[RMDB]
RNA sequence: GGGAACGACUCGAGUAGAGUCGAAAAUGUGACAUCAUCGAUUCUUCCACUACUAGUAUAUUACUAGUUGGCUCGGACCACAUAAGGUAUUGCGUUAAACCGUUUUCUUUCCAAGGGCAUGAUCCAAGCGGCGGUAGGUGGCAGCGAUUAUUGGAAAACAUCUAGCGUAGUUCGCUACGCUAGAUGUAAAAGAAACAACAACAACAAC
Reactivity to DMS in 0.01 (KOAc 150mM, MgCl2 10mM, bicine 150mM(pH8.5), 24C), signal-to-noise 1, nucleotides 027 to 156: u020g180u010g010a050c140a040u000c020a240u010c000g010a120u000u000c050u000u010c010c060a150c060u040a050c020u000a030g000u000a050u000a010u000u000a060c000u000a040g000u000u010g020g000c020u000c040g050g020a120c030c010a040c100a120u020a070a100g100g010u000a140u010u020g030c000g020u000u000a030a100a120c040c010g000u010u010u010u000c110u010u000u020c040c060a070a130g010g000g030c010a040u010g020a140u000c020c010a040a110g030c070g010g030c070g000g020u020a060g120g010u000g020g000c040a090g030c000g010a060u010u010a060u020u010g030g000a110a100a140
Reactivity to 2A3 in 0.01 (KOAc 150mM, MgCl2 10mM, bicine 150mM(pH8.5), 24C), signal-to-noise 2, nucleotides 027 to 156: u140g030u050g050a030c050a050u060c000a020u080c060g050a040u040u040c010u070u020c010c010a010c030u030a000c010u000a000g050u040a160u080a060u300u110a040c010u020a000g010u000u060g050g020c070u070c060g050g020a080c050c010a060c050a160u140a120a070g070g000u040a090u050u170g050c050g010u020u150a100a070a030c040c000g000u010u010u110u040c000u040u090u000c040c020a070a070g010g000g060c010a010u040g020a020u000c000c040a030a040g050c010g060g000c000g010g030u010a070g020g070u020g010g000c000a000g040c020g020a020u060u000a040u100u160g070g000a040a130a050
Source information:
Chemical mapping of a 207-nucleotide RNA with DMS and 2A3. It was measured as part of the RMDB library OK3TST. The reactions ran in a buffer of 150 mM KOAc, 10 mM MgCl2 and 150 mM bicine (pH 8.5), at 24 C. 2A3 adducts were read by reverse transcription with SuperScript II with manganese. DMS adducts were read by reverse transcription with MarathonRT. The DMS profile rests on 1,781 reads. Reactivities are given for positions 27 through 156.